[RMDB]
RNA sequence: GGGAACGACUCGAGUAGAGUCGAAAAAAACGGCGGAAGCGAACUUCGCGCUGAACUCGCCGUAAGUCAAGUGCAGUGAGCGUUUGUCAAUCAGCCCGAAGGCGGCCGCAUCCCAGAACGCCGUGGCUCACCAUACGGGGUUCGCCCCGUAUGGUGAAAAAGAAACAACAACAACAAC
Reactivity to DMS in 0.01 (KOAc 150mM, MgCl2 10mM, bicine 150mM(pH8.5), 24C), signal-to-noise 2, nucleotides 027 to 126: a070a030a030c030g000g000c010g010g010a140a080g010c020g010a110a100c070u000u010c130g030c300g030c010u020g000a050a120c040u000c000g000c010c030g010u000a030a050g010u020c200a060a100g000u000g000c000a100g010u000g000a080g000c090g000u000u020u000g010u010c140a110a160u000c010a050g010c010c060c050g010a010a050g020g000c030g020g010c010c010g000c040a140u000c000c000c020a110g010a080a030c050g000c010c040g030u010g010g020c120

Chemical mapping of a 177-nucleotide RNA with DMS. It was measured as part of the RMDB library OK2TRN. Reactivities are given for positions 27 through 126.